[RMDB]
Overview
The record gives the reactivity of an RNA of 177 nucleotides to 2A3. For 2A3, 698 sequencing reads were counted.
RNA sequence: GGGAACGACUCGAGUAGAGUCGAAAAGCUCGGAGACGAGCAAGGCUGACAAAACAAUGUCCCAACCUCCACGUGGUGUCGGCUGGAUAAUGCUGCAUUAUGUUGCAUUUAUCAACUGGGAACGAAAGACGCGAUCGCUAUUCGUAGCGAUCGCGUCAAAAGAAACAACAACAACAAC
Reactivity to 2A3 in 0.01 (KOAc 150mM, MgCl2 10mM, bicine 150mM(pH8.5), 24C), signal-to-noise 2, nucleotides 027 to 126: g000c000u010c000g060g050a160g000a040c000g000a000g000c000a010a010g050g000c000u010g040a000c000a000a000a070a030c030a010a040u080g050u000c000c000c000a030a010c000c000u000c000c020a190c140g150u070g040g000u000g010u020c000g000g050c010u070g100g030a000u040a070a000u020g010c020u010g010c010a030u120u160a170u300g000u040u050g000c020a000u050u120u060a020u020c000a030a030c070u040g010g000g060a060a000c020g100a090a060a120